[RMDB]
RNA sequence: GGGAACGACUCGAGUAGAGUCGAAAAAGCGUGGGGGGCGAGGCCGGGGAGCCUGCGCGCGUGGCGCUCCUUGUGGACUACCUCGCCGGCCUCCUGGGUGGCCUUCCAGAGCAGGAGCAGGUCGCGAACAGAGAUAGGGAUUCGUCCCUAUCUCUGUAAAAGAAACAACAACAACAAC
Reactivity to DMS in 0.01 (KOAc 150mM, MgCl2 10mM, bicine 150mM(pH8.5), 24C), signal-to-noise 3, nucleotides 027 to 126: a090g010c070g030u010g010g010g020g010g010g000c030g000a040g000g000c040c030g000g000g000g010a040g000c010c020u000g000c030g000c160g030c170g020u010g000g030c160g010c020u000c020c020u000u020g020u000g000g030a120c110u010a250c130c010u000c020g000c010c010g010g010c000c010u000c010c040u010g000g000g010u000g010g000c030c030u000u000c040c020a090g000a130g030c090a070g000g010a090g000c070a050g010g010u000c020g030c050g000a120
Reactivity to 2A3 in 0.01 (KOAc 150mM, MgCl2 10mM, bicine 150mM(pH8.5), 24C), signal-to-noise 1, nucleotides 027 to 126: a020g090c080g020u110g010g000g020g000g000g000c030g020a000g010g020c000c000g000g000g000g010a000g010c000c020u040g000c060g000c020g070c090g040u060g060g060c090g000c020u030c010c000u100u090g150u180g030g010a040c030u090a130c060c000u000c020g060c000c000g000g040c000c000u010c000c000u100g010g040g080u060g060g010c010c020u050u040c010c010a060g030a030g100c080a060g000g000a000g000c040a030g010g020u030c030g030c020g050a010

This 177-nucleotide RNA was probed chemically with DMS and 2A3.
Values cover nucleotides 27 to 126.
DMS (dimethyl sulfate) methylates the pairing face of unpaired adenines and cytosines.
Conditions: 150 mM KOAc, 10 mM MgCl2 and 150 mM bicine (pH 8.5), 24 C.
Source: RMDB library OK2TST, as collected in RNAgym.